[RMDB]
RNA sequence: GGGAACGACUCGAGUAGAGUCGAAAAGUGAUACCGGCAACCAGCCAAAUUUUGGUCCCGGAAGGUAACGGGAUCAUCGCUUCAGUUCCUGUAUCAGCAGAGUCAGGAGCUUUUCGCUGACAUUGCCAUUGAAGCGGAGCGUCCCGUGCCGGAACGAGCUCAUCGAGCUAUUCGUAGCUCGAUGAGCAAAAGAAACAACAACAACAAC
Reactivity to 2A3 in 0.01 (KOAc 150mM, MgCl2 10mM, bicine 150mM(pH8.5), 24C), signal-to-noise 1, nucleotides 027 to 156: g040u010g010a030u110a180c010c000g010g000c050a010a100c010c000a000g000c000c050a070a150a200u220u200u180u090g010g000u090c030c020c000g030g010a180a090g020g060u040a160a000c000g000g050g000a000u070c100a120u000c000g000c000u000u000c000a010g030u070u160c010c040u080g010u090a140u080c040a000g030c000a030g030a010g120u050c030a060g070g190a050g030c120u110u030u050u040c130g060c020u050g000a000c010a080u150u200g060c080c040a010u060u010g000a010a010g000c000g030g000a050g050c070g030u020c030c020c020g000u020g000c000c000g030g020a000a070c100g010a010

This 207-nucleotide RNA was probed chemically with 2A3. The 2A3 profile rests on 502 reads. For 2A3 the reverse transcriptase was SuperScript II with manganese. It was measured as part of the RMDB library OK3TST.